[RMDB]
RNA sequence: GGGAACGACUCGAGUAGAGUCGAAAACGACCCCCUGACGGGUCGGACAUAGCGUCAGGAUCAUCCGUGUCAGUCACCACGGUAAUCAUGUGACUGAUGAUGGUUUUCCAUCUUAAUCUGACUGAGUCGUAGCAGUCUACAGUACUAUGACAUUAGAGGUGCACGUCCCAUUCGUGGGACGUGCACCAAAAGAAACAACAACAACAAC
Reactivity to 2A3 in 0.01 (KOAc 150mM, MgCl2 10mM, bicine 150mM(pH8.5), 24C), signal-to-noise 1, nucleotides 027 to 156: c000g000a010c000c000c000c000c000u000g000a000c000g000g000g020u100c030g020g010a050c070a110u200a030g040c000g000u000c000a000g040g000a060u170c070a070u080c000c050g020u000g090u150c090a000g020u000c000a000c000c000a000c000g000g070u090a000a090u010c020a010u060g000u000g000a000c010u000g000a000u150g000a000u000g000g160u000u300u230u070c000c000a000u000c000u020u150a150a270u070c080u200g000a000c020u000g010a000g000u000c000g000u000a000g030c000a000g000u000c100u170a150c050a070g060u020a030c000u000a000u000g000a010c000a000u070u110a050g050a000